[RMDB]
This 155-nucleotide RNA was probed chemically with DMS. For DMS the reverse transcriptase was MarathonRT.
RNA sequence: GGGAACGACUCGAGUAGAGUCGAAAAUAUAAAAGCUGAGAUGAGCUCAGCAAGGGUAUUUUUCGACGGCGAAAGCCUCGUUCCCUAUCCCUUGCUGAGCUCAUCUCAGCUUUUACACGCCUUAUUCGUAAGGCGAAAAGAAACAACAACAACAAC
Reactivity to DMS in 0.01 (KOAc 150mM, MgCl2 10mM, bicine 150mM(pH8.5), 24C), signal-to-noise 3, nucleotides 027 to 135: u040a150u010a010a010a010a020g010c000u000g000a010g000a020u000g000a010g030c000u000c000a010g000c000a000a000g000g020g010u000a070u010u010u010u020u030c090g020a090c300g040g010c000g000a110a080a160g010c000c010u000c000g010u000u000c000c010c010u010a200u010c000c000c000u000u010g010c000u000g000a010g010c000u000c010a000u000c000u000c000a000g000c000u000u000u000u000a020c200a150c070g000c010c010u000u000a020u010u030c140g020u000a030a020g000g010c020g010a060